[RMDB]
RNA sequence: GGGAACGACUCGAGUAGAGUCGAAAAGGAGCAGCCGGCAACACGGUUUCCGCUGUGGAGACGGGGCGUCCUGGCUUGAGUUCACUCCUCUCCAGGUGGAGCUGCCGCCGUGAGACCAAGGCCAGGCCUGAUCAUACGGUUUCGACCGUAUGAUCAGAAAAGAAACAACAACAACAAC
Reactivity to DMS in 0.01 (KOAc 150mM, MgCl2 10mM, bicine 150mM(pH8.5), 24C), signal-to-noise 5, nucleotides 027 to 126: g020g010a110g020c030a170g010c030c010g020g000c060a120a140c040a040c020g000g010u000u010u010c040c030g010c030u010g010u010g020g010a050g000a020c150g020g010g000g000c080g000u000c020c000u000g010g010c180u000u010g010a090g010u000u000c020a070c010u000c020c010u000c000u000c000c020a300g010g010u000g000g010a060g000c190u000g010c120c150g000c000c000g020u000g010a120g010a180c090c060a080a120g010g010c010c030a150g020g010c110